[RMDB]
RNA sequence: GGGAACGACUCGAGUAGAGUCGAAAAGGCGGCGUGCACUGGCUGGCCAUGGCCUGGUACCCUCCGAGUCAGACAUUCUACCUGUUCGACCCGUUUGGAUUCUCAGACGGAAAAUUACUCCAAGUUUAUCAGUUCGAGUACGAGGGCCUCCUGCGCCCUCCCCUGGUCAUUUCGAUGACCAGGGGAGAAAAGAAACAACAACAACAAC
Reactivity to DMS in 0.01 (KOAc 150mM, MgCl2 10mM, bicine 150mM(pH8.5), 24C), signal-to-noise 2, nucleotides 027 to 156: g000g040c020g030g030c050g060u010g030c050a100c050u000g030g010c020u000g000g020c000c060a120u000g020g000c040c010u000g010g040u000a030c040c030c010u000c040c000g020a110g010u010c030a050g000a090c020a080u000u000c060u000a040c090c070u000g020u010u000c020g020a080c030c000c010g030u010u000u010g020g010a280u000u000c080u000c020a060g000a050c020g010g000a020a040a040a080u010u000a040c050u000c030c090a130a150g000u000u000u010a130u010c050a040g000u020u000c030g000a100g040u000a080c050g000a050g020g030g000c040c030u000c060c020u010g010c070g020c010c030
Reactivity to 2A3 in 0.01 (KOAc 150mM, MgCl2 10mM, bicine 150mM(pH8.5), 24C), signal-to-noise 3, nucleotides 027 to 156: g030g000c010g010g030c080g020u040g020c090a030c240u070g050g020c020u050g060g000c020c050a090u130g030g010c010c050u040g040g000u090a060c000c010c000u000c040c000g010a020g000u030c040a020g010a050c000a060u070u030c030u080a060c030c020u020g040u020u030c030g020a040c010c000c000g010u020u000u020g140g020a250u290u050c150u060c080a010g010a010c000g010g000a030a060a060a100u140u070a040c010u010c020c020a070a070g030u070u090u120a200u120c040a050g040u110u080c030g050a010g020u080a100c040g010a050g010g000g010c010c050u140c010c030u110g020c070g010c060c030
Structure probing data (DMS and 2A3) for a 207-nucleotide construct. For DMS the reverse transcriptase was MarathonRT. The RNA was probed in 150 mM KOAc, 10 mM MgCl2 and 150 mM bicine (pH 8.5) at 24 C. DMS (dimethyl sulfate) methylates the pairing face of unpaired adenines and cytosines. For 2A3, 2,009 sequencing reads were counted. The DMS profile rests on 4,816 reads.